Source information:
An RNA of 177 nucleotides, treated with DMS and read out base by base. The DMS profile rests on 1,306 reads.
RNA sequence: GGGAACGACUCGAGUAGAGUCGAAAAGAGGCCCUAGGGGCUUCUCGGCUCGUCGUCGACGAAGGGUCUAGAAGCCUGGGCGCUGGCUGGAGCGCGCGGCUGUGCAGUAAUCGCUCCUUUGGAGAAGCAUGCUAGGUUAGUUCGCUAACCUAGCAUGAAAAGAAACAACAACAACAAC
Reactivity to DMS in 0.01 (KOAc 150mM, MgCl2 10mM, bicine 150mM(pH8.5), 24C), signal-to-noise 1, nucleotides 027 to 126: g000a160g010g010c010c000c030u020a080g010g020g000g000c000u000u000c000u000c020g030g010c020u000c030g010u000c000g010u010c210g020a140c050g010a010a030g000g010g010u000c010u010a040g000a020a030g020c020c000u010g030g010g030c030g000c030u000g020g030c050u020g000g000a090g010c000g010c080g020c050g010g020c030u000g000u010g030c040a140g000u000a080a080u010c070g010c020u000c010c020u000u000u000g020g010a080g000a130a140g030